RNA sequence: GGGAACGACUCGAGUAGAGUCGAAAAGAUAUGGAUGGAGCGAUUAAUGUGAGGGAGUCGGAAACGACUCCUCCCCACCACAUACAUCGCGAUGAAAUCCUAAGUCAAACUCCGGUUCGCCGGAGAACAAGCAACGGAUGUUCGCAUCCGUUGCUUGAAAAGAAACAACAACAACAAC
Reactivity to DMS in 0.01 (KOAc 150mM, MgCl2 10mM, bicine 150mM(pH8.5), 24C), signal-to-noise 1, nucleotides 027 to 126: g000a000u010a170u020g030g020a050u000g010g020a100g000c010g010a000u000u000a250a140u010g000u000g000a270g020g000g020a020g000u000c010g020g000a060a210a070c000g010a000c000u000c000c000u000c010c000c000c010a300c000c070a010c010a000u000a110c300a030u000c000g000c000g000a110u020g000a120a030a050u000c000c000u000a110a050g010u000c010a030a120a170c000u000c000c000g000g000u040u020c200g020c030c000g010g000a030g000a010a170